The record gives the reactivity of an RNA of 207 nucleotides to DMS and 2A3. Reactivities are given for positions 27 through 156. Conditions: 150 mM KOAc, 10 mM MgCl2 and 150 mM bicine (pH 8.5), 24 C. For 2A3, 1,885 sequencing reads were counted. Source: RMDB library M2RFOK, as collected in RNAgym.
RNA sequence: GGGAACGACUCGAGUAGAGUCGAAAAAACGUUGCAUGAUCCUAAAACAUGCCCGGCUUACCGUGAGCCGCCUUUGAAAGAAAGGUUUACACGGACUCUGUUGCGUUACGCACGUACCUAACUUGUGAAAACGGCAUCUUGUUCGCAAGAUGCCGAAGUAACAAUAACCCUUCGGGGUUAUUGUUACAAAAGAAACAACAACAACAAC
Reactivity to DMS in 0.01 (KOAc 150mM, MgCl2 10mM, bicine 150mM(pH8.5), 24C), signal-to-noise 2, nucleotides 027 to 156: a020a040c070g020u000u010g020c050a090u000g000a140u000c050c010u000a060a070a080a140c020a010u000g000c040c030c040g010g010c020u000u010a070c010c030g000u040g000a050g050c030c030g010c010c010u010u000u010g030a170a100a230g030a090a050a010g020g030u040u000u000a110c000a060c010g000g000a140c090u010c050u000g010u000u000g000c020g000u010u010a090c090g010c050a060c110g030u000a050c050c010u020a060a050c060u000u020g050u000g000a090a090a100a220c020g010g010c000a010u010c010u020u000g020u010u010c300g000c020a040a010g020a020u000g000c010c000g000a000a010
Reactivity to 2A3 in 0.01 (KOAc 150mM, MgCl2 10mM, bicine 150mM(pH8.5), 24C), signal-to-noise 2, nucleotides 027 to 156: a020a000c100g040u040u070g000c010a010u020g030a160u160c050c070u160a030a110a000a000c000a030u020g010c000c010c000g000g000c010u050u090a070c010c010g000u010g020a000g010c000c010g000c000c020u020u000u010g110a100a060a010g060a010a030a000g010g000u030u060u020a020c000a000c020g000g100a060c050u070c080u190g110u140u050g020c020g030u040u060a060c180g000c010a000c010g040u040a050c010c040u030a080a160c070u150u100g060u060g130a010a030a040a040c010g010g000c000a000u000c000u020u010g040u060u040c100g000c110a000a000g000a010u000g000c000c010g000a000a000